[RMDB]
RNA sequence: GGGAACGACUCGAGUAGAGUCGAAAAGACAUUUCCAGGCAUUAGAGGGGAUGUGGCCGGAUGGCGAGGAGGGGCCGUCCUCACCAGGACUCCAAGCAGUUCUCGCACCUGACUUCGUAGGCCUGUACACCAAUGCUAAAUUCGUUUAGCAUUGGUGAAAAGAAACAACAACAACAAC
Reactivity to DMS in 0.01 (KOAc 150mM, MgCl2 10mM, bicine 150mM(pH8.5), 24C), signal-to-noise 9, nucleotides 027 to 126: g000a110c150a110u000u000u000c030c010a120g000g010c070a090u010u010a100g010a110g010g000g000g010a060u000g010u010g010g020c050c070g010g010a090u010g020g020c030g010a080g010g000a080g010g010g010g010c050c060g000u000c010c010u000c070a060c170c090a060g000g010a050c030u000c050c050a060a120g010c060a060g000u000u000c020u010c090g010c060a090c070c020u000g000a110c050u000u000c070g010u000a090g010g000c010c010u000g010u010a180
Reactivity to 2A3 in 0.01 (KOAc 150mM, MgCl2 10mM, bicine 150mM(pH8.5), 24C), signal-to-noise 9, nucleotides 027 to 126: g040a010c040a070u050u050u000c020c010a030g070g000c030a080u080u160a100g040a060g090g010g000g020a020u070g030u050g080g030c040c020g020g020a040u050g030g010c020g020a050g020g030a040g020g030g020g000c010c010g020u010c000c010u020c020a060c020c030a000g020g010a020c010u000c020c010a050a030g010c020a030g040u050u000c040u040c060g010c010a040c010c020u070g100a180c020u060u020c070g050u050a020g000g050c000c000u010g030u040a020